RNA sequence: GGGAACGACUCGAGUAGAGUCGAAAAUUGUGGUCAAGACCUUGGCGUAGUAUCCAAGGUUGUCAACGUUCCUAUUGACUUAACAAUGAUUGAGUUUAUGUUAUGGUGUAAGGAUGGACAGGGGAAAAUGUGCUAUGGAUUUCGAUCCAUAGCACAUAAAAGAAACAACAACAACAAC
Reactivity to 2A3 in 0.01 (KOAc 150mM, MgCl2 10mM, bicine 150mM(pH8.5), 24C), signal-to-noise 3, nucleotides 027 to 126: u010u000g020u030g040g040u080c020a090a030g020a030c010c000u000u010g000g030c090g090u080a040g040u050a100u060c010c010a000a000g000g010u000u030g010u000c000a040a010c030g000u010u010c000c010u020a070u030u050g020a010c000u050u040a070a010c020a050a170u090g050a180u060u140g010a060g090u110u120u080a120u140g140u100u050a070u140g010g000u040g030u060a080a070g050g030a040u080g020g010a030c020a020g040g030g000g020a000a070a040
Reactivity to DMS in 0.01 (KOAc 150mM, MgCl2 10mM, bicine 150mM(pH8.5), 24C), signal-to-noise 6, nucleotides 027 to 126: u000u000g030u000g000g030u010c050a060a090g000a020c000c000u010u010g010g000c300g010u000a170g010u010a140u000c000c000a010a010g000g010u000u000g010u000c090a060a300c050g010u000u000c000c010u000a100u000u000g000a030c000u000u010a060a050c040a070a040u000g000a110u010u000g020a110g010u000u010u010a050u000g000u000u000a070u000g010g010u000g010u000a060a050g000g010a060u000g000g000a040c050a060g020g000g010g000a060a050a080
An RNA of 177 nucleotides, treated with 2A3 and DMS and read out base by base. Reactivities are given for positions 27 through 126. The reactions ran in a buffer of 150 mM KOAc, 10 mM MgCl2 and 150 mM bicine (pH 8.5), at 24 C. For 2A3, 2,761 sequencing reads were counted.